[RMDB]
RNA sequence: GGGAACGACUCGAGUAGAGUCGAAAAGGACUCCGUGAGGAGUCCGUGCAGCGAGAGCUGCACAAGCGGUUAUAGUGACACGGUCCGCGAGCUCAUCGAUGUGGAGAUGAGCUCUGUAGUAGCCGCACGAUUUAUAGUGCGGCAUACGAGUGUCAGGAUGUAUCAAGUCAUUCGUGACUUGAUACAUAAAAGAAACAACAACAACAAC
Reactivity to 2A3 in 0.01 (KOAc 150mM, MgCl2 10mM, bicine 150mM(pH8.5), 24C), signal-to-noise 4, nucleotides 027 to 156: g000g000a000c000u000c000c000g020u030g040a050g020g000a000g000u000c000c000g000u000g000c000a010g010c000g020a090g010a010g060c000u000g010c010a000c010a020a010g020c010g000g020u070u120a110u070a200g060u050g010a000c000a000c000g060g010u010c000c000g000c000g000a000g000c000u010c000a000u000c000g100a100u140g070u120g190g080a110g000a030u000g000a000g000c000u000c000u000g010u000a030g000u010a000g000c000c010g010c000a000c000g040a030u050u300u220a190u150a080g000u000g000c000g010g000c000a000u000a000c000g020a050g000u000g010u000c000a010g020g070
Reactivity to DMS in 0.01 (KOAc 150mM, MgCl2 10mM, bicine 150mM(pH8.5), 24C), signal-to-noise 2, nucleotides 027 to 156: g010g010a000c000u000c020c020g020u000g000a280g030g000a070g000u010c000c010g020u000g030c000a000g020c000g000a300g000a300g010c010u010g030c000a000c030a040a130g030c050g010g000u000u000a090u010a120g010u010g000a010c010a010c000g000g010u010c000c010g030c030g020a010g000c010u000c030a010u000c000g000a240u020g000u030g030g020a290g000a010u000g000a050g020c000u000c000u010g030u000a090g010u000a040g010c000c000g030c010a020c000g000a210u000u000u020a160u010a180g010u010g000c000g020g020c000a010u000a000c030g000a100g020u000g020u000c000a110g000g010
This 207-nucleotide RNA was probed chemically with 2A3 and DMS.
It was measured as part of the RMDB library OK3TST.
The DMS profile rests on 4,408 reads.
The RNA was probed in 150 mM KOAc, 10 mM MgCl2 and 150 mM bicine (pH 8.5) at 24 C.
2A3 is a SHAPE reagent: it acylates the 2'-hydroxyl of flexible nucleotides of all four kinds.
The 2A3 profile rests on 3,385 reads.